[RMDB]
Structure probing data (DMS and 2A3) for a 177-nucleotide construct. For DMS the reverse transcriptase was MarathonRT. The RNA was probed in 150 mM KOAc, 10 mM MgCl2 and 150 mM bicine (pH 8.5) at 24 C. As a SHAPE reagent, 2A3 marks flexible, mostly unpaired nucleotides at the ribose 2'-OH. The data come from the RNA Mapping Database (RMDB), library VIROID. For DMS, 3,096 sequencing reads were counted.
RNA sequence: GGGAACGACUCGAGUAGAGUCGAAAAAAGAAGGUAGCGGAGAAAGGAGCGGGCCUCCCGAUCCGAGUGGUCCGUGGCGUAUCGAGUUUGGAGUCAUCCGGACGAAGGGCUGAGAUGACCCACGGUCGAAGUAUAAGCUGUUCGCAGCUUAUACUUCAAAAGAAACAACAACAACAAC
Reactivity to DMS in 0.01 (KOAc 150mM, MgCl2 10mM, bicine 150mM(pH8.5), 24C), signal-to-noise 3, nucleotides 027 to 126: a090a050g010a090a070g020g010u000a080g020c030g010g000a040g000a150a160a100g010g000a090g020c070g020g030g010c120c030u000c010c010c010g000a150u000c040c030g000a040g020u010g000g000u010c010c020g030u000g000g000c110g000u000a060u000c030g030a080g000u000u010u000g000g020a250g010u000c030a070u000c060c080g010g020a020c010g010a250a110g010g010g000c010u000g000a160g000a010u000g000a050c050c000c010a020c100g010g000u000c120
Reactivity to 2A3 in 0.01 (KOAc 150mM, MgCl2 10mM, bicine 150mM(pH8.5), 24C), signal-to-noise 2, nucleotides 027 to 126: a000a000g150a050a000g100g020u150a030g040c010g050g060a020g020a090a110a030g010g020a000g040c070g030g100g020c000c040u040c020c030c000g010a010u000c000c040g020a040g050u100g040g040u000c020c000g010u000g040g000c050g060u040a050u050c030g030a050g050u070u110u080g060g020a090g030u020c010a040u060c090c070g130g000a010c030g080a080a060g080g100g000c010u010g070a100g000a260u030g040a040c000c000c010a000c030g010g020u060c120